[RMDB]
RNA sequence: GGGAACGACUCGAGUAGAGUCGAAAACACUACCGGACUUACCUGAAUGGUGGCAAGGGCUCGAAGAGGGAUCCCCGGGGAAAACUACUCGAGCGAGGCGGAGAUCGAGCGCCAGAUCGAGCGCGGCCACACUGAUAAGGUUCGCCUUAUCAGUGUGAAAAGAAACAACAACAACAAC
Reactivity to DMS in 0.01 (KOAc 150mM, MgCl2 10mM, bicine 150mM(pH8.5), 24C), signal-to-noise 4, nucleotides 027 to 126: c150a100c080u000a090c070c010g010g010a250c080u010u010a080c090c040u010g020a090a090u010g010g020u000g020g020c060a110a120g000g000g010c020u010c030g020a050a090g010a090g000g010g000a210u010c030c030c010c080g000g000g010g000a060a030a080a110c020u000a030c010u000c000g000a020g010c030g000a070g020g010c030g010g000a090g000a050u000c060g010a100g000c030g010c010c020a080g010a060u000c080g010a100g000c040g010c040g010g000c120
Reactivity to 2A3 in 0.01 (KOAc 150mM, MgCl2 10mM, bicine 150mM(pH8.5), 24C), signal-to-noise 4, nucleotides 027 to 126: c040a020c030u100a100c030c020g050g000a020c020u160u160a080c030c030u070g110a140a070u130g060g020u020g020g000c060a120a130g080g060g000c030u030c030g100a120a070g030a040g080g020g030a050u020c000c020c030c010g100g000g000g020a030a040a030a050c030u040a020c000u010c020g000a000g010c020g000a040g020g020c040g020g010a070g000a090u070c050g050a010g020c020g000c010c000a030g020a070u080c030g010a020g060c030g000c020g020g030c030